[RMDB]
RNA sequence: GGGAACGACUCGAGUAGAGUCGAAAAAGCAGGAGUACGCUCCUGCAUGGGUAGACGAAUUGACCCCAACUGAAGUUCAAUUCUAACGUUAAAAGGAGUUUGAUAUGACUGGACGUACGCGUCCAGAUGACGAUUUCAUUCUUCGGAAUGAAAUCAACACUAGACAUAACUUCGGUUAUGUCUAGUGAAAAGAAACAACAACAACAAC
Reactivity to 2A3 in 0.01 (KOAc 150mM, MgCl2 10mM, bicine 150mM(pH8.5), 24C), signal-to-noise 5, nucleotides 027 to 156: a000g000c000a010g000g020a000g020u060a040c180g030c100u000c000c010u000g010c010a010u010g010g000g020u110a110g040a210c070g000a020a000u000u020g010a010c000c000c000c010a100a050c150u240g060a020a010g020u080u000c000a000a000u000u000c020u100a140a050c120g090u120u170a040a050a020a040g190g030a100g040u090u130u120g110a090u080a080u230g120a060c000u000g000g010a000c000g010u040a020c230g010c000g120u000c000c000a000g000a010u050g050a020c120g000a000u000u000u010c010a000u000u000c010u040u050c090g070g010a000a000u000g000a000a010a000u000c000a000a010
Reactivity to DMS in 0.01 (KOAc 150mM, MgCl2 10mM, bicine 150mM(pH8.5), 24C), signal-to-noise 2, nucleotides 027 to 156: a170g010c010a030g000g020a040g030u000a080c300g040c020u010c000c000u010g030c040a040u010g010g010g010u000a090g010a150c140g010a060a070u010u010g000a070c030c000c010c010a090a290c130u020g000a080a050g050u000u000c020a020a070u000u010c010u000a090a120c100g010u000u000a080a060a100a060g000g000a160g000u000u000u010g010a110u010a100u000g010a140c000u000g000g010a020c010g060u010a070c260g070c020g020u000c000c010a040g000a030u000g020a100c090g010a040u000u000u000c020a020u000u000c000u000u000c300g020g010a020a020u000g000a000a000a020u000c000a100a140
An RNA of 207 nucleotides, treated with 2A3 and DMS and read out base by base.
The 2A3 profile rests on 3,751 reads.